Background:
Chemical mapping of a 177-nucleotide RNA with DMS and 2A3. The DMS profile rests on 4,729 reads. For DMS the reverse transcriptase was MarathonRT. Conditions: 150 mM KOAc, 10 mM MgCl2 and 150 mM bicine (pH 8.5), 24 C. Values cover nucleotides 27 to 126. For 2A3 the reverse transcriptase was SuperScript II with manganese.

[RMDB]
RNA sequence: GGGAACGACUCGAGUAGAGUCGAAAAAGGGCCGCUACACCUGGCUGGAGCAAGGGAUACUCGAUCAGUCCGAAGGCACCGGACCGUGGAUCGCGUCCUGGGAACCGGGUCCAUCCACCGAGGCCAAGAUUGAAGGCUAAUUCGUUAGCCUUCAAUCAAAAGAAACAACAACAACAAC
Reactivity to DMS in 0.01 (KOAc 150mM, MgCl2 10mM, bicine 150mM(pH8.5), 24C), signal-to-noise 4, nucleotides 027 to 126: a100g010g000g020c020c020g000c050u000a090c140a090c060c040u000g020g000c040u000g000g000a090g000c070a090a150g010g010g000a100u000a080c060u010c020g010a050u010c080a150g000u010c010c020g020a130a120g000g000c070a070c100c020g000g000a050c060c150g020u010g010g000a030u000c080g020c140g010u000c010c010u000g000g010g000a090a120c060c040g000g020g000u000c030c020a070u000c030c020a060c050c030g000a120g000g000c020c030a100a120
Reactivity to 2A3 in 0.01 (KOAc 150mM, MgCl2 10mM, bicine 150mM(pH8.5), 24C), signal-to-noise 2, nucleotides 027 to 126: a010g030g000g010c000c010g000c060u080a030c050a050c020c040u040g050g000c040u030g020g040a050g050c050a070a070g040g000g020a050u060a150c010u010c050g030a070u060c020a020g010u000c010c020g050a100a080g120g010c070a030c030c020g020g000a030c030c030g090u100g110g020a020u030c040g000c030g050u000c010c000u030g000g040g030a060a050c050c020g030g010g000u000c010c020a020u020c010c010a030c010c070g020a060g050g000c000c030a030a010